Chemical mapping of a 207-nucleotide RNA with 2A3 and DMS. As a SHAPE reagent, 2A3 marks flexible, mostly unpaired nucleotides at the ribose 2'-OH. DMS (dimethyl sulfate) methylates the pairing face of unpaired adenines and cytosines.
[RMDB]
RNA sequence: GGGAACGACUCGAGUAGAGUCGAAAAGGAACUAGAGCUGUUUAACUUGAAGAUGAGAUGGCUGAACUGUGAUUUAAUUAAUCUCUGUGAAUCUAUGAAGGAUUUCUCUAAAGAGAGUUCUUAACACUUGUUCUUCAUGUUCUCAGAAGAUGAAGCAACUCGAGUAUACUUUCGAGUAUACUCGAGUAAAAGAAACAACAACAACAAC
Reactivity to 2A3 in 0.01 (KOAc 150mM, MgCl2 10mM, bicine 150mM(pH8.5), 24C), signal-to-noise 4, nucleotides 027 to 156: g020g000a020a020c040u060a090g010a020g100c070u050g080u150u100u100a080a060c040u050u100g060a060a040g020a090u060g030a020g030a090u040g030g000c030u040g010a030a030c040u030g020u010g070a070u070u090u150a070a070u060u080a040a010u020c010u000c000u010g020u010g030a020a010u010c080u150a040u210g020a040a030g000g010a010u060u230u030c040u000c030u110a050a170a000g090a020g010a010g020u130u050c050u140u180a110a020c060a020c080u060u170g010u020u000c000u010u010c010a010u060g020u030u000c030u000c010a070g020a130a010g010a050u060g050a050a000g070c030a010
Reactivity to DMS in 0.01 (KOAc 150mM, MgCl2 10mM, bicine 150mM(pH8.5), 24C), signal-to-noise 3, nucleotides 027 to 156: g020g000a040a150c030u000a120g000a110g020c010u000g000u010u000u000a070a130c050u010u000g030a100a130g030a150u010g000a070g010a080u000g010g010c030u010g000a050a070c030u020g010u000g000a160u010u000u000a060a110u000u000a090a080u000c010u000c000u000g000u000g000a030a050u000c050u000a060u000g020a080a130g000g000a040u000u000u010c020u000c060u010a080a070a130g000a110g010a150g000u000u000c050u000u020a040a090c040a040c040u020u000g010u000u000c000u000u010c010a020u000g010u000u000c020u000c030a050g010a070a080g000a060u010g010a090a110g000c060a100